RNA sequence: GGGAACGACUCGAGUAGAGUCGAAAAAGGGGGCCGCUUUCCUCGUAAAUCCAGCAGCACACUUAUAGUUGCCAACGAAGACAACUUCGCUAUAGCCGCUUAAGGCUUAAGCCUCGAAACUGCUUGUGUCCGUGCUCGCAGCGUAGAGUCAUCAUCACUUCCAAUCCAUGUUCGCAUGGAUUGGAAGAAAAGAAACAACAACAACAAC
Reactivity to 2A3 in 0.01 (KOAc 150mM, MgCl2 10mM, bicine 150mM(pH8.5), 24C), signal-to-noise 1, nucleotides 027 to 156: a000g000g000g000g000g060c090c020g050c050u030u010u100c000c020u010c010g040u050a050a010a050u040c080c050a010g020c010a010g110c030a020c000a030c090u140u120a100u160a180g010u010u020g000c020c020a130a060c080g060a090a010g050a010c000a140a120c070u090u080c030g000c010u130a180u170a170g000c000c000g080c150u140u200a110a020g000g010c020u000u040a090a000g010c000c000u040c000g010a060a010a020c000u000g000c000u030u100g000u000g130u130c080c050g030u130g000c010u010c010g010c000a030g000c000g010u010a010g000a010g080u040c000a030u090c000a020u030c010a000
The data come from the RNA Mapping Database (RMDB), library ARCHII. Chemical mapping of a 207-nucleotide RNA with 2A3. The reactions ran in a buffer of 150 mM KOAc, 10 mM MgCl2 and 150 mM bicine (pH 8.5), at 24 C. For 2A3, 460 sequencing reads were counted.